Annotation
This 207-nucleotide RNA was probed chemically with DMS and 2A3. For 2A3 the reverse transcriptase was SuperScript II with manganese. The reactions ran in a buffer of 150 mM KOAc, 10 mM MgCl2 and 150 mM bicine (pH 8.5), at 24 C. The DMS profile rests on 7,896 reads.
RNA sequence: GGGAACGACUCGAGUAGAGUCGAAAAGGGGUCUCCAUCGAUCACUUCUUGAAAUUAUUUGUCAGCGAAACUGAAGCCUCCACGGUUUCGCUUGGAUUUAAUAAUCGUACGGAAGUGGGAGGAGACGGAGGCACCCAAAGCGUGUUUCGACACGCAAUCACUAAUGUUGAUUCGUCAACAUUAGUGAAAAAGAAACAACAACAACAAC
Reactivity to DMS in 0.01 (KOAc 150mM, MgCl2 10mM, bicine 150mM(pH8.5), 24C), signal-to-noise 4, nucleotides 027 to 156: g000g010g040g020u010c000u000c010c010a300u010c130g000a080u010c010a010c000u000u000c000u020u010g020a230a010a050u000u000a040u000u000u020g010u000c100a100g000c010g010a020a010a020c010u010g000a050a260g010c020c010u000c010c020a150c010g010g000u000u010u000c010g020c020u000u000g030g030a130u010u000u000a020a030u000a000a020u000c030g010u010a300c300g000g010a020a010g020u000g010g010g010a050g030g010a080g010a020c010g010g040a050g030g030c010a020c010c000c010a070a080a130g000c010g020u000g020u000u000u010c230g020a130c010a000c000g020c000a030a110
Reactivity to 2A3 in 0.01 (KOAc 150mM, MgCl2 10mM, bicine 150mM(pH8.5), 24C), signal-to-noise 8, nucleotides 027 to 156: g040g000g010g010u010c010u010c010c010a140u300c010g000a010u010c000a000c000u010u010c020u090u180g090a110a110a110u140u080a140u090u120u170g260u210c130a000g000c000g000a010a000a000c010u020g030a120a010g020c000c000u010c000c000a030c020g020g000u000u000u000c000g000c000u000u080g010g010a020u090u180u090a070a040u070a040a040u070c110g070u100a040c040g000g000a000a000g000u000g000g000g000a010g000g000a000g000a000c020g000g000a000g000g010c000a040c010c000c010a050a070a010g010c010g010u010g030u030u180u140c170g060a020c000a000c000g000c000a000a060